[RMDB]
RNA sequence: GGGAACGACUCGAGUAGAGUCGAAAAGGCAAUCGUCGCCCCCAGCCGACGGCGCUAUCCCGGGGACGGGUCGUAACCCGCUCGUCCCCGCCUUUACACCUUCCGGAAGGAGUUCAGCCCCCCUCCGACUAAUGCGCGAUUUCGAUCGCGCAUUAGUAAAAGAAACAACAACAACAAC
Reactivity to DMS in 0.01 (KOAc 150mM, MgCl2 10mM, bicine 150mM(pH8.5), 24C), signal-to-noise 1, nucleotides 027 to 126: g000g000c080a110a110u050c140g030u020c000g020c010c050c000c010c000a120g010c180c080g000a120c110g000g000c090g020c090u000a080u020c000c020c000g000g050g000g000a000c000g000g010g000u040c130g000u040a080a110c120c120c070g020c010u000c000g000u000c000c000c000c000g030c020c000u000u040u000a090c090a090c000c020u020u000c060c010g000g060a100a090g000g030a000g020u000u000c120a110g010c070c000c000c060c000c000u000c020c000g010
Reactivity to 2A3 in 0.01 (KOAc 150mM, MgCl2 10mM, bicine 150mM(pH8.5), 24C), signal-to-noise 2, nucleotides 027 to 126: g020g000c030a040a060u120c030g010u020c000g000c010c000c000c010c010a010g090c070c020g030a030c010g000g030c030g000c030u050a040u100c000c000c000g000g010g000g000a000c020g000g010g000u110c020g030u040a090a100c040c000c000g000c010u000c000g010u030c020c000c000c000g000c000c000u060u080u010a040c030a050c030c010u070u050c030c010g010g060a060a020g040g020a000g070u070u120c010a060g010c000c010c010c000c000c000u030c000c010g000